[RMDB]
RNA sequence: GGGAACGACUCGAGUAGAGUCGAAAACAACUGUUAUCUUGCCUCUGCAUUGUUAACACUCCAACAAAUAGAGUUGAAGUUUAAUCCACCUGCUCUACAAAGGGCUGGUGAAGCUGCUAACUUUUGUUACUCACAUUUAGUUCGCUAAAUGUGAGUAAAAAGAAACAACAACAACAAC
Reactivity to DMS in 0.01 (KOAc 150mM, MgCl2 10mM, bicine 150mM(pH8.5), 24C), signal-to-noise 4, nucleotides 027 to 126: c060a060a100c140u000g020u000u010a040u000c020u000u000g010c030c090u010c120u010g010c130a080u010u010g020u010u000a070a050c110a050c060u010c010c030a030a070c090a050a100a150u020a090g010a080g010u000u000g000a070a040g020u000u000u010a040a080u010c160c010a020c020c000u000g000c000u010c010u000a110c300a070a090a060g020g000g010c000u000g000g000u010g000a050a090g000c050u000g000c090u010a030a030c020u000u000u000u010g000u000
Reactivity to 2A3 in 0.01 (KOAc 150mM, MgCl2 10mM, bicine 150mM(pH8.5), 24C), signal-to-noise 2, nucleotides 027 to 126: c010a000a050c030u050g040u090u020a050u010c020u030u150g010c030c060u050c050u150g000c030a040u010u090g040u060u030a030a000c020a010c040u010c000c030a000a000c010a020a190a110u160a090g090a010g070u030u070g030a000a000g030u070u030u230a040a050u020c020c000a000c000c000u010g020c010u010c000u040a120c050a040a270a060g010g020g020c000u010g010g000u010g000a000a030g010c030u090g040c010u030a030a020c010u010u100u030u050g060u040